[RMDB]
RNA sequence: GGGAACGACUCGAGUAGAGUCGAAAACUAUGCGACUUCGGUCGCAUAGAAAAGGUGCAUCGUACGGUACCGAAGUACGAUUAAAGCUCAAAAGAGCUAUAAAAAGCACGCCCUUCGGGGCGUGCAACGAUACAUCUGUGUUCGCACAGAUGUAUCGAAAAGAAACAACAACAACAAC
Reactivity to 2A3 in 0.01 (KOAc 150mM, MgCl2 10mM, bicine 150mM(pH8.5), 24C), signal-to-noise 3, nucleotides 027 to 126: c010u000a000u000g000c000g030a010c000u030u090c210g070g000u020c000g000c000a000u000a000g000a010a080a000a030g020g010u060g000c020a010u020c010g010u020a010c020g040g280u030a040c030c030g040a020a000g020u010a000c000g000a000u010u040a090a200a000g010c010u010c040a190a270a160a170g020a010g000c020u010a040u150a160a090a000a000a010g000c000a000c000g000c010c000c000u000u010c190g000g000g010g010c020g000u000g000c010a010a000
Reactivity to DMS in 0.01 (KOAc 150mM, MgCl2 10mM, bicine 150mM(pH8.5), 24C), signal-to-noise 3, nucleotides 027 to 126: c000u000a010u010g020c000g010a010c000u010u010c170g060g040u000c000g000c000a010u000a000g000a060a030a100a080g030g020u010g000c130a030u000c000g020u000a020c010g010g020u010a160c010c000g000a070a120g000u000a010c000g000a040u010u010a060a140a070g000c000u000c010a100a070a060a160g000a000g000c000u000a070u010a060a070a070a300a110g000c000a000c000g010c010c000c000u000u000c200g030g000g000g000c000g040u000g000c000a000a010